The data come from the RNA Mapping Database (RMDB), library TTRDEL.
The record gives the reactivity of an RNA of 177 nucleotides to 2A3 and DMS.
The 2A3 profile rests on 15,577 reads.
The RNA was probed in 150 mM KOAc, 10 mM MgCl2 and 150 mM bicine (pH 8.5) at 24 C.
Reactivities are rounded to 0.1 and cut off at 0 and 3.
Reactivities are given for positions 27 through 126.
RNA sequence: GGGAACGACUCGAGUAGAGUCGAAAAGAUAUGGAGGUUCCCAGCUUUUGACGGUCACUCGGAAACGAGAAUGACCGAUAAGCUGCACCUCCUAAGUCAAAGCAUCCCGCGUUCGCGCGGGAUGCAACAAAUGAACAUAGUUCGCUAUGUUCAUUUGAAAAGAAACAACAACAACAAC
Reactivity to 2A3 in 0.01 (KOAc 150mM, MgCl2 10mM, bicine 150mM(pH8.5), 24C), signal-to-noise 6, nucleotides 027 to 126: g010a020u060a060u190g000g000a010g020g000u060u090c050c050c010a000g000c000u090u130u110u240g250a140c020g020g000u000c010a020c040u000c000g020g020a080a090a060c030g030a040g090a300a300u080g010a000c010c000g000a000u000a000a000g000c000u000g000c050a000c000c000u010c010c000u020a130a020g020u020c040a140a080a030g010c020a000u000c000c020c030g010c000g020u040u060c280g010c020g000c010g140g000g000a000u000g030c000a000a000
Reactivity to DMS in 0.01 (KOAc 150mM, MgCl2 10mM, bicine 150mM(pH8.5), 24C), signal-to-noise 6, nucleotides 027 to 126: g010a050u010a300u010g000g010a010g010g000u000u000c110c200c010a020g000c000u000u000u010u000g020a180c070g010g000u000c000a060c000u000c000g010g010a100a080a160c010g010a020g000a110a140u000g000a010c000c000g010a040u010a010a010g010c000u000g040c180a020c000c000u000c000c000u000a010a060g010u000c040a090a120a150g000c000a010u000c000c000c000g020c000g020u000u010c200g020c020g030c010g000g000g000a000u000g000c010a020a050